Annotation
An RNA of 177 nucleotides, treated with DMS and 2A3 and read out base by base. The 2A3 profile rests on 1,258 reads.
RNA sequence: GGGAACGACUCGAGUAGAGUCGAAAAUAUUACAUCUUCGGAUGUAAUAACUGGUGGUGGCUGGCUUGUUGCUAGAGGCGCAACUGUUGCCAUGACUGCGCAAUCGCUCUGAAUUCGUUCAGAGCAAGAUGGCCCAGAUAUUCGUAUCUGGGCCAUCAAAAGAAACAACAACAACAAC
Reactivity to DMS in 0.01 (KOAc 150mM, MgCl2 10mM, bicine 150mM(pH8.5), 24C), signal-to-noise 1, nucleotides 027 to 126: u000a010u000u000a000c000a010u000c000u000u020c200g040g000a030u030g030u000a000a000u000a020a150c060u000g000g020u010g020g050u000g010g000c040u000g020g000c040u010u000g000u010u000g010c010u000a130g020a110g050g030c150g010c030a000a040c020u010g000u000u000g030c010c010a020u010g010a070c060u020g010c150g010c120a090a070u000c150g030c000u000c010u020g000a010a030u000u020c240g010u030u000c000a000g000a010g030c010a020a040
Reactivity to 2A3 in 0.01 (KOAc 150mM, MgCl2 10mM, bicine 150mM(pH8.5), 24C), signal-to-noise 1, nucleotides 027 to 126: u050a000u000u000a000c000a040u000c040u020u040c170g110g000a000u050g000u030a000a000u010a000a030c060u070g020g110u070g020g020u020g030g120c060u030g030g030c000u040u120g050u000u070g010c030u060a050g010a050g290g030c030g000c040a010a020c020u070g160u240u060g010c020c000a010u040g070a050c030u020g040c050g000c030a040a110u100c080g000c000u000c000u000g010a010a000u060u030c100g020u040u000c010a000g010a010g010c000a010a000
The RNA was probed in 150 mM KOAc, 10 mM MgCl2 and 150 mM bicine (pH 8.5) at 24 C.